[RMDB]
RNA sequence: GGGAACGACUCGAGUAGAGUCGAAAAGAAGUAUACAAAUGUUUGAACCCUCUUUUACUAAAAUCCUGAUACUUCGGGUGUGUGGAUGUGCAAAUCCAUACUAUAUUAUUUAUUGCCAGUAAUGGCUGAUCCUAAACUCUUUCGAGAGUUUAGGAUCAAAAGAAACAACAACAACAAC
Reactivity to 2A3 in 0.01 (KOAc 150mM, MgCl2 10mM, bicine 150mM(pH8.5), 24C), signal-to-noise 6, nucleotides 027 to 126: g000a010a000g020u030a060u050a080c120a080a210a140u230g160u140u120u220g120a130a110c010c060c010u050c080u010u190u060u110a130c110u120a020a020a030a050u030c000c010u000g010a030u000a060c000u020u010c000g010g000g000u020g000u010g000u000g010g020a030u020g080u090g150c080a080a190a010u010c000c000a000u000a000c000u000a020u040a040u140u070a120u030u160u060a140u120u140g000c010c010a040g050u120a060a220u020g030g000c000u000
Reactivity to DMS in 0.01 (KOAc 150mM, MgCl2 10mM, bicine 150mM(pH8.5), 24C), signal-to-noise 2, nucleotides 027 to 126: g000a000a040g000u000a030u010a230c130a070a080a150u030g010u000u000u000g000a090a170c020c000c000u010c170u020u030u040u000a090c160u030a030a010a030a170u000c000c000u000g020a060u000a010c020u020u000c020g000g000g020u000g000u000g090u000g000g000a000u000g040u040g020c300a120a090a030u000c000c000a020u000a000c010u010a060u050a100u010u000a030u030u020u030a110u100u010g000c000c000a050g010u040a100a110u000g000g020c040u000